[RMDB]
Chemical mapping of a 177-nucleotide RNA with 2A3 and DMS. For DMS, 1,235 sequencing reads were counted. Values cover nucleotides 27 to 126. The data come from the RNA Mapping Database (RMDB), library M2PK90. For 2A3 the reverse transcriptase was SuperScript II with manganese.

RNA sequence: GGGAACGACUCGAGUAGAGUCGAAAAACAAAGCAUGGCUAGAAGAUGCCACCGCGGAUAGUGCUGAGGUACUCUAGACUUCUAGCCAGAAGAAUUCCCAAACCGCGGAGAGUGCUCUCGCAAAAAAUCAUGUUACACAGUUCGCUGUGUAACAUGAAAAAGAAACAACAACAACAAC
Reactivity to 2A3 in 0.01 (KOAc 150mM, MgCl2 10mM, bicine 150mM(pH8.5), 24C), signal-to-noise 1, nucleotides 027 to 126: a000c040a030a140a000g090c030a070u030g000g000c000u010a000g000a030a000g030a060u130g100c060c020a000c000c000g010c010g020g000a100u120a160g200u130g090c160u170g030a020g050g010u020a020c000u000c020u020a100g080a170c010u010u030c000u000a000g000c030c000a000g000a010a020g000a020a050u010u020c000c020c000a000a020a020c000c010g000c000g000g000a030g000a000g000u030g000c010u000c000u030c190g140c060a120a050a000a000a040a060
Reactivity to DMS in 0.01 (KOAc 150mM, MgCl2 10mM, bicine 150mM(pH8.5), 24C), signal-to-noise 2, nucleotides 027 to 126: a030c120a110a060a110g000c050a210u000g000g000c020u000a040g000a010a030g030a140u000g020c100c110a140c010c030g010c020g030g000a130u010a080g030u000g000c140u020g010a090g010g010u000a030c020u000c090u010a080g010a060c020u000u000c010u010a010g040c000c000a020g000a040a160g000a140a150u010u000c000c000c000a040a060a130c040c020g010c000g020g000a080g000a050g010u000g000c020u000c040u020c040g050c150a000a030a020a050a030a020